Chemical mapping of a 177-nucleotide RNA with 2A3 and DMS. Values cover nucleotides 27 to 126. For DMS, 39,692 sequencing reads were counted. For 2A3 the reverse transcriptase was SuperScript II with manganese. The reactions ran in a buffer of 150 mM KOAc, 10 mM MgCl2 and 150 mM bicine (pH 8.5), at 24 C.
RNA sequence: GGGAACGACUCGAGUAGAGUCGAAAAGCUCUGUGAGAGAGAUCGAACAACAAAGAGAGAUCGAAAAUCUUAGAGGAGAGAACGAAUCUGUCGACUUCACUAGGACAUUGUCGAUCAGAGGUCCAAAGACGUUUCAUGGGUUCGCCUAUGGAACGUCAAAAGAAACAACAACAACAAC
Reactivity to 2A3 in 0.01 (KOAc 150mM, MgCl2 10mM, bicine 150mM(pH8.5), 24C), signal-to-noise 9, nucleotides 027 to 126: g020c000u000c000u000g030u030g010a030g000a000g000a000g000a040u020c020g060a060a050c030a040a020c040a020a300a010g110a010g010a000g010a010u010c010g040a030a040a030a050u000c010u010u020a020g010a040g040g020a010g000a010g030a070a040c030g030a070a140u160c130u180g100u040c040g030a090c000u020u020c020a010c040u030a010g000g040a020c030a120u090u200g150u060c000g000a000u020c010a000g010a010g020g030u000c010c000a020a040a040
Reactivity to DMS in 0.01 (KOAc 150mM, MgCl2 10mM, bicine 150mM(pH8.5), 24C), signal-to-noise 9, nucleotides 027 to 126: g010c010u000c000u000g010u000g000a280g000a030g000a130g010a040u000c010g010a270a200c070a080a100c240a070a110a080g000a080g010a290g000a010u000c010g000a070a080a080a210u000c000u000u010a020g000a060g010g000a020g000a090g000a130a020c020g000a090a130u030c150u040g010u000c000g000a150c010u000u000c010a110c020u010a030g010g000a030c150a070u020u000g010u000c020g000a090u000c010a040g010a030g000g010u020c030c010a050a080a110